Conditions: 150 mM KOAc, 10 mM MgCl2 and 150 mM bicine (pH 8.5), 24 C.
This 177-nucleotide RNA was probed chemically with 2A3 and DMS.
The 2A3 profile rests on 6,646 reads.
The DMS profile rests on 4,226 reads.
In probing experiments dimethyl sulfate is read out at A N1 and C N3, which are open when not base-paired.
DMS adducts were read by reverse transcription with MarathonRT.
The data come from the RNA Mapping Database (RMDB), library OK1LIB.
[RMDB]
RNA sequence: GGGAACGACUCGAGUAGAGUCGAAAAUAAACCUUCUUAAACAUAGCUGUACUAAUCCUGCGCUACACUAAUCUAUUGAGUCGGUUAUUCAGUAGACUCAUCAAUCAUGCAGAGACGCUGCUCAGCCUCUGGAUACUUACUUCGGUAAGUAUCCAGAAAAAGAAACAACAACAACAAC
Reactivity to 2A3 in 0.01 (KOAc 150mM, MgCl2 10mM, bicine 150mM(pH8.5), 24C), signal-to-noise 8, nucleotides 027 to 126: u180a010a060a040c030c000u100u090c060u110u240a140a120a060c070a110u150a030g020c020u020g040u090a070c030u090a040a050u020c010c020u040g000c050g000c030u100a030c060a020c090u100a080a120u100c030u060a100u090u120g000a010g030u020c030g090g110u180u090a100u200u120c020a030g040u030a020g060a030c010u020c010a010u030c010a000a060u080c030a030u140g020c000a000g060a040g010a110c040g040c060u060g000c020u020c060a020g020c010c020
Reactivity to DMS in 0.01 (KOAc 150mM, MgCl2 10mM, bicine 150mM(pH8.5), 24C), signal-to-noise 4, nucleotides 027 to 126: u000a120a100a100c030c000u000u000c080u020u010a050a150a130c140a090u010a090g010c070u020g000u030a060c050u000a110a070u010c040c040u000g020c010g030c050u000a090c030a070c090u030a180a110u030c060u050a050u000u000g000a000g000u000c120g020g000u040u010a060u010u010c080a120g020u000a080g000a020c120u010c030a010u030c220a110a070u040c100a110u010g030c090a070g000a080g010a100c030g000c090u000g000c040u000c040a050g000c070c080